[RMDB]
RNA sequence: GGGAACGACUCGAGUAGAGUCGAAAACGACUCAAUACGUCCCCGUCGUACAGAAUGGUAACAUAUCUCUCCAAAUAUCUGAGCUUGGGUAUACGGGGAAACCCCACCCCUUGGGAAGAUUGGGUAUAAAAGGAGCGAUCCUUCGGGAUCGCUCCAAGGCUUAAAAUCAGUUCGCUGAUUUUAAGCCAAAAGAAACAACAACAACAAC
Reactivity to 2A3 in 0.01 (KOAc 150mM, MgCl2 10mM, bicine 150mM(pH8.5), 24C), signal-to-noise 1, nucleotides 027 to 156: c050g020a000c010u020c030a090a020u040a140c060g060u030c000c000c000c000g010u020c010g010u020a060c030a030g080a050a170u060g080g090u130a120a060c060a040u140a180u000c060u000c000u060c050c020a090a160a130u190a080u040c170u070g020a030g070c050u100u120g030g000g010u100a060u010a020c050g000g000g000g050a000a040a080c000c000c000c000a010c000c010c000c000u060u040g080g010g000a080a000g000a010u040u030g000g030g080u050a030u100a100a130a050a070g000g000a000g000c010g000a000u000c000c030u040u040c070g070g000g000a010u000c010g000c000u000c000c000a000a000
An RNA of 207 nucleotides, treated with 2A3 and read out base by base.
For 2A3 the reverse transcriptase was SuperScript II with manganese.
For 2A3, 479 sequencing reads were counted.